The record gives the reactivity of an RNA of 207 nucleotides to 2A3. It was measured as part of the RMDB library ARCHII. For 2A3, 595 sequencing reads were counted. Values cover nucleotides 27 to 156. For 2A3 the reverse transcriptase was SuperScript II with manganese.
[RMDB]
RNA sequence: GGGAACGACUCGAGUAGAGUCGAAAAGGGACGUUUCCGUGACUGGGCUUGUCUGCACCAUGUCGGUGUGAGUGCAGGAGCCGAGCAAUAACGACAGCAUCGACUGCGCCCGGAGAAUGUCUGGACGGUCUUUCAAGGACGCGGGUUCAAUUCCCGCCGAGUCUGACAUGUUCGCAUGUCAGACUCGAAAAGAAACAACAACAACAAC
Reactivity to 2A3 in 0.01 (KOAc 150mM, MgCl2 10mM, bicine 150mM(pH8.5), 24C), signal-to-noise 1, nucleotides 027 to 156: g000g000g000a000c000g000u000u050u000c000c000g040u050g000a030c120u120g020g000g000c010u040u080g000u140c000u000g020c010a000c000c020a030u130g090u150c230g150g060u190g000u040g010a150g020u000g010c000a000g070g000a010g070c000c000g000a020g020c050a070a190u200a250a020c020g200a050c050a050g020c020a180u110c080g100a130c070u050g000c020g000c020c000c000g020g050a060g050a130a100u130g000u020c000u040g000g090a070c130g020g000u050c000u000u270u140c070a110a110g050g000a050c020g020c000g020g000g000u080u040c020a010a010u000u010c000c000c000g040c000